[RMDB]
This 177-nucleotide RNA was probed chemically with 2A3 and DMS.
RNA sequence: GGGAACGACUCGAGUAGAGUCGAAAAUGCAUACAAGAGUUAAGACGAUCUCAGGACACAGGAAAAGUGUCGAAUUUCCUGCUCAGUUUCUUAGCUCCCAUUCAUUCUGGAUACGGAAGAGUGCAUAGCGUUUUGUUAAGUUCGCUUAACAAAACGCAAAAGAAACAACAACAACAAC
Reactivity to 2A3 in 0.01 (KOAc 150mM, MgCl2 10mM, bicine 150mM(pH8.5), 24C), signal-to-noise 2, nucleotides 027 to 126: u010g000c000a020u020a110c050a130a030g000a000g010u070u020a040a000g030a000c050g050a110u000c050u000c070a050g100g000a020c020a010c000a060g070g100a060a040a040a040g150u110g090u100c010g000a000a080u000u020u030c000c020u000g000c010u000c090a090g000u030u160u000c000u000u010a000g010c020u040c000c010c010a060u090u090c030a040u100u000c020u030g150g010a120u090a210c030g040g020a010a050g030a030g030u020g000c010a010u030a050
Reactivity to DMS in 0.01 (KOAc 150mM, MgCl2 10mM, bicine 150mM(pH8.5), 24C), signal-to-noise 3, nucleotides 027 to 126: u000g000c040a040u000a090c200a150a130g010a040g000u010u000a040a030g000a060c260g020a090u010c070u000c130a100g000g010a080c160a100c020a030g010g000a050a030a040a080g030u000g000u010c150g000a120a060u010u000u000c040c000u000g000c160u000c060a120g010u000u000u000c020u000u000a030g010c010u000c010c070c040a080u000u010c050a160u000u010c080u000g000g000a130u030a100c150g030g020a050a040g000a170g020u000g000c050a030u000a120
Source: RMDB library OK2TST, as collected in RNAgym. The reactions ran in a buffer of 150 mM KOAc, 10 mM MgCl2 and 150 mM bicine (pH 8.5), at 24 C.